Structure probing data (DMS and 2A3) for a 177-nucleotide construct.
It was measured as part of the RMDB library OK1LIB.
The 2A3 profile rests on 6,281 reads.
For DMS, 3,745 sequencing reads were counted.
For 2A3 the reverse transcriptase was SuperScript II with manganese.
For DMS the reverse transcriptase was MarathonRT.
The RNA was probed in 150 mM KOAc, 10 mM MgCl2 and 150 mM bicine (pH 8.5) at 24 C.
RNA sequence: GGGAACGACUCGAGUAGAGUCGAAAAGGCUCAGGAAACUGAGCCAAGAAUGAGCAGAGAAAAGAACUAGUGACUGCUCAGAACAGAAUAAAAGUACACUAGAAAAUAGGAGCAGGAAACUGCUCCAAGUCCUCGUAAUAUUCGUAUUACGAGGACUAAAAGAAACAACAACAACAAC
Reactivity to DMS in 0.01 (KOAc 150mM, MgCl2 10mM, bicine 150mM(pH8.5), 24C), signal-to-noise 3, nucleotides 027 to 126: g000g010c010u010c000a010g000g000a130a080a200c000u000g010a010g030c010c000a000a050g000a110a160u010g010a000g030c000a000g000a290g000a100a090a130a080g000a110a120c000u000a000g010u000g020a280c000u020g000c000u020c000a020g020a230a170c070a070g020a130a040u030a020a010a100a090g020u020a030c020a000c000u000a000g000a210a080a150a070u060a080g000g030a030g000c000a000g000g000a050a090a140c000u000g000c000u000c010c010a010
Reactivity to 2A3 in 0.01 (KOAc 150mM, MgCl2 10mM, bicine 150mM(pH8.5), 24C), signal-to-noise 5, nucleotides 027 to 126: g000g000c010u000c000a000g030g000a030a060a090c000u000g000a010g000c000c000a000a010g020a010a100u090g000a000g000c010a000g030a000g070a100a100a090a030g170a090a040c010u010a000g000u000g050a060c000u000g000c010u010c000a000g000a060a030c060a010g090a070a050u190a180a080a020a000g100u110a050c000a000c020u020a000g060a090a140a010a020u250a130g000g000a000g010c000a000g010g000a030a100a020c000u000g000c000u010c000c000a000